RNA sequence: GGGAACGACUCGAGUAGAGUCGAAAAACUAGUAAUAGUGGUUGCAUUUAUGACUUUGUAAUCCAAUUCAUUGGUGAUACUACAUAACUUCGCUAAUUGAUCAUUUUGAUCAAUAUAUCAUUCAAGUCUACCCCCUCGGUUUCGACCGAGGGGGUAGAAAAGAAACAACAACAACAAC
Reactivity to 2A3 in 0.01 (KOAc 150mM, MgCl2 10mM, bicine 150mM(pH8.5), 24C), signal-to-noise 1, nucleotides 027 to 126: a000c080u080a030g020u060a030a270u020a060g050u010g000g030u020u140g020c030a040u000u000u000a050u060g010a000c010u040u000u000g120u210a000a100u000c080c020a000a040u040u000c000a000u000u000g020g010u030g000a000u020a150c000u000a000c010a120u080a140a040c020u190u190c040g020c010u060a140a050u030u000g000a000u000c050a080u020u050u180u300g000a000u000c030a000a000u030a000u000a030u010c120a010u000u170c090a210a000g200u000
An RNA of 177 nucleotides, treated with 2A3 and read out base by base.
2A3 adducts were read by reverse transcription with SuperScript II with manganese.
Reactivities are given for positions 27 through 126.